[RMDB]
RNA sequence: GGGAACGACUCGAGUAGAGUCGAAAAGCGUACUACUAGACGCCCAAGCCACUCAUGGAGGGAGUGAAGUCCCAAAUAGGACUUCACGAAGAACUCCAUGGAGCUUGGGAACUACGUCUAGUAUCGCAAAACCGUGUGGCGUUCGCGCCACACGGAAACGCAAGAGGAGUUUCGACUCCUCUUGCGUAAAAGAAACAACAACAACAAC
Reactivity to 2A3 in 0.01 (KOAc 150mM, MgCl2 10mM, bicine 150mM(pH8.5), 24C), signal-to-noise 1, nucleotides 027 to 156: g000c000g010u090a030c000u010a000c000u010a000g020a010c000g050c000c000c000a000a020g000c020c040a190c090u240c030a030u010g010g000a010g000g000g000a030g010u000g000a000a000g000u030c020c020c000a190a300a090u240a060g000g000a000c010u000u000c000a010c000g000a090a060g020a010a000c000u000c000c020a000u010g000g000a000g030c010u000u020g000g000g020a000a010c030u170a050c040g000u000c010u010a010g000u000a000u060c000g000c000a020a020a020a020c000c000g040u000g040u010g000g030c030g010u050u210c300g070c000g040c060c000a010c000a000c020g000g060a000a040